[RMDB]
RNA sequence: GGGAACGACUCGAGUAGAGUCGAAAAACCGGAUUAGAUACCCGGGUAGUCCGAGCUGUAAACGAUGUCUGCUAGGUGUGGCACAGGCUACGAGCCUGUGCUGUGCCGUAGGGAAGCCGUGAAGCAGGUUUCUACAAUAGUUCGCUAUUGUAGAAACAAAAGAAACAACAACAACAAC
Reactivity to DMS in 0.01 (KOAc 150mM, MgCl2 10mM, bicine 150mM(pH8.5), 24C), signal-to-noise 3, nucleotides 027 to 126: a080c020c000g000g000a030u010u000a170g000a190u010a090c120c000c000g000g020g000u000a090g010u000c010c010g030a120g000c030u000g000u000a070a290a040c040g010a070u020g000u000c000u000g010c010u010a110g000g010u000g000u000g000g000c000a010c000a010g000g010c000u000a150c250g010a140g010c000c010u000g010u000g000c000u000g010u000g000c010c010g010u010a020g010g000g000a040a070g000c080c000g010u000g000a100a120g010c010a040g030
Reactivity to 2A3 in 0.01 (KOAc 150mM, MgCl2 10mM, bicine 150mM(pH8.5), 24C), signal-to-noise 3, nucleotides 027 to 126: a000c010c000g010g020a020u050u060a090g060a140u130a140c020c010c010g010g030g030u060a040g040u000c020c030g030a060g070c010u040g030u130a060a040a030c010g020a050u070g090u100c010u070g130c020u060a010g000g000u010g000u010g020g000c000a000c000a000g020g000c010u080a070c240g050a040g020c000c000u000g000u010g000c000u000g000u000g000c000c010g010u000a000g000g010g020a020a020g050c030c010g030u020g020a090a010g000c000a020g040
Structure probing data (DMS and 2A3) for a 177-nucleotide construct. Values cover nucleotides 27 to 126. Source: RMDB library RFMREP, as collected in RNAgym. The RNA was probed in 150 mM KOAc, 10 mM MgCl2 and 150 mM bicine (pH 8.5) at 24 C.